Structure probing data (2A3 and DMS) for a 207-nucleotide construct. For 2A3 the reverse transcriptase was SuperScript II with manganese. The 2A3 profile rests on 3,475 reads. The data come from the RNA Mapping Database (RMDB), library M2RFPK.
RNA sequence: GGGAACGACUCGAGUAGAGUCGAAAAUCACCAGAUGCUGCAUCACCUGAUCACUGAUGGCUCCACGGUAUCCGGCGGUACAACUGAAUACUUGUAGCUGCCUUUUGAGCGGGUUGGCUGCAAUCCGAAAAGAGGACACACUUCGGUGUGUCCUCAAGAUGCCGAUAUAGUUCGCUAUAUCGGCAUCAAAAGAAACAACAACAACAAC
Reactivity to 2A3 in 0.01 (KOAc 150mM, MgCl2 10mM, bicine 150mM(pH8.5), 24C), signal-to-noise 4, nucleotides 027 to 156: u050c010a050c050c000a010g010a040u060g000c040u050g010c000a040u030c030a060c010c010u020g010a030u040c010a010c070u050g010a060u040g060g000c010u030c040c010a050c070g000g020u040a030u020c020c020g030g010c050g070g080u180a080c070a090a030c090u110g040a070a050u050a110c040u030u070g000u010a000g000c010u020g010c000c010u020u060u050u080g060a030g010c050g020g020g020u130u180g070g020c020u020g020c010a000a080u020c020c010g050a060a050a030a060g010a000g000g000a000c000a000c000a000c010u040u100c120g010g000u000g000u000g030u000c000c000u000c000a000a000
Reactivity to DMS in 0.01 (KOAc 150mM, MgCl2 10mM, bicine 150mM(pH8.5), 24C), signal-to-noise 1, nucleotides 027 to 156: u000c040a090c010c000a060g000a080u000g000c050u000g050c040a130u000c030a060c040c020u000g060a080u030c030a100c130u000g040a140u000g020g020c010u000c030c160a110c080g020g000u000a010u000c030c030g020g020c030g020g000u020a120c070a080a110c020u010g010a060a080u000a070c050u000u000g000u000a050g110c030u000g020c020c000u000u010u010u010g020a050g030c000g000g020g040u000u000g060g040c080u000g030c030a050a110u000c030c020g000a030a090a080a230g010a020g020g020a010c000a010c000a000c000u000u000c300g060g010u010g070u000g000u010c010c010u000c000a000a050